[RMDB]
RNA sequence: GGGAACGACUCGAGUAGAGUCGAAAAUUCUUUUGCCAAGACACGGGGUGGACAAUAAGAUUCCUUUACAAAGCACUGGUGUAAGUGUUCGCCUGGUGCUGCAAAAAGCGGCUCACUGGGAAUGGGGGAUGUUAUAUUUCUUCGGAAAUAUAACAUCAAAAGAAACAACAACAACAAC
Reactivity to 2A3 in 0.01 (KOAc 150mM, MgCl2 10mM, bicine 150mM(pH8.5), 24C), signal-to-noise 3, nucleotides 027 to 126: u010u020c000u060u060u030u050g040c020c010a060a030g050a030c040a010c100g010g000g010g020u040g000g010a020c030a040a100u110a120a020g040a040u020u070c000c000u030u100u080a080c070a060a160a020g050c000a000c040u030g030g050u090g070u100a080a140g060u040g050u140u050c010g010c010c010u040g050g000u030g000c000u010g000c010a100a130a020a060a050g030c030g010g000c050u050c050a060c020u050g020g030g050a050a060u060g010g010g010g020
Reactivity to DMS in 0.01 (KOAc 150mM, MgCl2 10mM, bicine 150mM(pH8.5), 24C), signal-to-noise 4, nucleotides 027 to 126: u010u000c020u000u000u010u000g010c040c050a110a110g020a100c080a060c080g000g000g010g010u010g000g010a040c060a040a060u010a060a080g010a120u010u000c020c010u000u010u000a110c140a050a120a100g000c050a020c010u000g000g010u010g010u010a040a100g020u000g010u000u000c050g000c020c010u000g000g020u000g020c010u000g020c090a050a070a070a080a060g010c060g010g010c050u010c060a050c040u000g010g010g010a070a060u000g000g010g010g010
The record gives the reactivity of an RNA of 177 nucleotides to 2A3 and DMS. For 2A3, 3,067 sequencing reads were counted.